Description:
Chemical mapping of a 177-nucleotide RNA with DMS and 2A3. It was measured as part of the RMDB library TTRDEL. 2A3 adducts were read by reverse transcription with SuperScript II with manganese. For DMS, 1,133 sequencing reads were counted. Values cover nucleotides 27 to 126. For 2A3, 2,975 sequencing reads were counted.
[RMDB]
RNA sequence: GGGAACGACUCGAGUAGAGUCGAAAAGAUAUGGAUCGACUGCAUGGGAGCUCGUCGGAAACGAUCGAGCGAAGAACAUGUUCGAUCCUAAGUCAAACCAACUAGAUUCUUCGGAAUCUAGUUGGAAGAAUCGUCAAAUCUUCGGAUUUGACGAUUCAAAAGAAACAACAACAACAAC
Reactivity to DMS in 0.01 (KOAc 150mM, MgCl2 10mM, bicine 150mM(pH8.5), 24C), signal-to-noise 2, nucleotides 027 to 126: g000a010u000a300u000g000g000a010u000c000g010a010c300u000g020c020a020u000g000g000g030a170g000c000u010c000g000u000c000g000g000a150a080a210c000g030a020u010c110g000a010g010c000g020a060a090g000a090a150c000a000u000g020u010u000c000g000a010u010c010c010u000a010a090g000u000c010a130a090a250c000c000a010a000c000u000a020g000a030u010u000c010u000u010c170g000g020a020a000u000c000u000a000g020u000u000g000g010a020a010
Reactivity to 2A3 in 0.01 (KOAc 150mM, MgCl2 10mM, bicine 150mM(pH8.5), 24C), signal-to-noise 2, nucleotides 027 to 126: g040a000u070a040u110g000g000a000u000c000g040a020c130u300g040c050a020u030g060g050g000a030g020c010u010c000g000u010c000g030g080a030a030a020c020g020a060u300c170g000a000g020c070g000a060a020g060a020a040c000a000u010g010u010u020c000g010a000u000c000c000u000a050a000g020u000c010a000a100a030c000c000a000a000c000u020a000g010a010u010u040c030u070u080c300g110g010a010a010u010c000u000a000g000u010u000g030g000a010a010